[RMDB]
RNA sequence: GGGAACGACUCGAGUAGAGUCGAAAAAAAGUCUCAGGUAUUGACGUGCUCUAUCCAACCGACUUUUACGGCGACGCCAAGUUUCGCUAGACUUCAAGUUGAUCCUGAUGGAAAAGUGUCGGUUAUUUAUAAGCCCUCUGGAGUUCUCCAAUGGUUAAGCAAUCAUAGUAUUCGUACUAUGAUUGCUAAAAGAAACAACAACAACAAC
Reactivity to DMS in 0.01 (KOAc 150mM, MgCl2 10mM, bicine 150mM(pH8.5), 24C), signal-to-noise 2, nucleotides 027 to 156: a070a020a030g030u000c030u000c040a100g020g000u000a050u000u000g020a030c060g020u010g010c050u000c030u000a130u000c050c030a060a060c050c010g000a060c050u000u000u000u000a100c060g040g010c040g030a060c090g030c060c070a040a120g010u000u000u000c070g030c020u000a080g000a120c050u010u010c030a040a130g020u010u000g020a090u010c020c010u000g000a090u010g010g020a070a050a060a050g010u010g010u000c040g010g010u000u000a090u000u000u000a140u010a110a140g010c030c000c000u000c030u000g010g020a110g000u000u000c030u010c020c030a020a110u010g000g000u000u000a090
Reactivity to 2A3 in 0.01 (KOAc 150mM, MgCl2 10mM, bicine 150mM(pH8.5), 24C), signal-to-noise 3, nucleotides 027 to 156: a000a000a010g060u030c040u010c060a040g100g020u090a080u080u110g040a030c020g040u060g020c010u000c020u040a120u040c070c020a020a020c040c000g000a010c010u090u100u030u130a040c050g040g000c030g030a010c030g080c080c080a090a080g010u030u130u070c040g000c000u030a040g070a110c020u050u040c090a090a040g010u060u060g060a060u030c020c020u040g030a090u120g070g060a100a070a010a030g050u070g040u070c020g030g000u000u050a030u020u160u030a180u030a060a010g000c000c010c000u020c040u010g050g000a030g060u150u020c040u010c040c000a060a090u090g040g010u100u090a030
Chemical mapping of a 207-nucleotide RNA with DMS and 2A3. Conditions: 150 mM KOAc, 10 mM MgCl2 and 150 mM bicine (pH 8.5), 24 C. Values cover nucleotides 27 to 156. It was measured as part of the RMDB library OK3TST.